[RMDB]
RNA sequence: GGGAACGACUCGAGUAGAGUCGAAAAUGACAGCCCAUCACGAGAUGGGACACAUCCAAUAUGACAUGGCAUAUGCCAGGCAACCUUUCCUGCUAAGAAACGGAGCCAAUGAAGGGUUCCAUGAAGCCGUCGUAUGAUAAUUCGUUAUCAUACGACGAAAAGAAACAACAACAACAAC
Reactivity to 2A3 in 0.01 (KOAc 150mM, MgCl2 10mM, bicine 150mM(pH8.5), 24C), signal-to-noise 5, nucleotides 027 to 126: u100g040a020c050a030g040c000c020c000a010u010c020a020c210g300a300g000a140u010g000g010g040a010c020a000c000a050u030c030c020a050a050u160a090u180g080a060c070a090u030g010g000c050a070u140a060u300g030c020c010a010g010g010c020a050a060c000c010u010u050u010c010c020u040g060c030u130a160a030g050a100a090a010c080g020g010a010g000c010c020a050a100u240g110a110a070g110g000g000u020u010c010c000a020u080g070a040a010g040c030
Reactivity to DMS in 0.01 (KOAc 150mM, MgCl2 10mM, bicine 150mM(pH8.5), 24C), signal-to-noise 9, nucleotides 027 to 126: u000g000a100c160a150g020c000c000c000a160u000c000a170c300g000a150g010a010u000g000g010g010a060c090a050c070a080u000c030c050a090a090u010a050u000g010a080c060a040u000g000g010c030a110u010a060u010g010c020c010a050g000g010c100a040a050c040c040u000u000u000c010c030u000g000c060u010a100a100g010a070a080a070c140g010g000a260g010c010c020a060a060u010g010a100a120g010g000g010u000u000c000c000a040u000g010a110a130g010c130

This 177-nucleotide RNA was probed chemically with 2A3 and DMS. The data come from the RNA Mapping Database (RMDB), library OK2TRN. The reactions ran in a buffer of 150 mM KOAc, 10 mM MgCl2 and 150 mM bicine (pH 8.5), at 24 C. Reactivities are given for positions 27 through 126.